[RMDB]
RNA sequence: GGGAACGACUCGAGUAGAGUCGAAAACUCUUGUCAGGUGAAAGUUGAUGGUCGCCGUGUCAGUCCAUGCCUUUGAAAACAGUUCUAUGUAGUAGGGAGUCGAGAACCUAUGAGAGUUAGAACUUGCUAUGCCUUGGACUCUUCGGAGUCCAAGGAACAUGGUGGUAAGAUUCGUCUUACCACCAUGAAAAGAAACAACAACAACAAC
Reactivity to 2A3 in 0.01 (KOAc 150mM, MgCl2 10mM, bicine 150mM(pH8.5), 24C), signal-to-noise 4, nucleotides 027 to 156: c010u020c010u030u080g070u080c060a050g040g020u050g050a130a080a060g040u070u080g070a090u080g060g010u010c030g000c070c040g040u030g010u030c030a020g040u000c030c010a030u050g030c000c020u090u100u130g130a080a100a030a020c050a020g000u020u020c020u030a040u090g030u010a050g000u000a000g020g010g050a020g060u060c040g030a020g020a210a040c000c010u010a020u030g060a100g000a010g070u030u030a010g010a010a010c000u020u040g000c010u060a070u130g030c000c000u000u000g000g000a010c000u000c010u040u070c190g080g010a000g000u000c000c000a000a000g000g000a000a010
Reactivity to DMS in 0.01 (KOAc 150mM, MgCl2 10mM, bicine 150mM(pH8.5), 24C), signal-to-noise 3, nucleotides 027 to 156: c030u000c020u000u000g020u000c030a080g020g030u000g010a050a070a090g010u000u000g010a130u000g000g010u000c030g050c010c020g020u010g020u000c020a100g020u010c040c050a060u010g010c020c020u000u000u000g000a080a070a070a060c030a060g010u000u000c010u000a050u000g020u000a300g010u000a020g020g020g020a130g020u000c120g020a250g000a090a110c010c010u000a020u000g010a250g020a180g020u000u000a030g000a030a040c010u000u010g030c020u000a110u000g010c000c000u000u000g010g010a030c000u000c000u000u000c300g030g020a030g020u000c000c000a000a000g000g010a010a060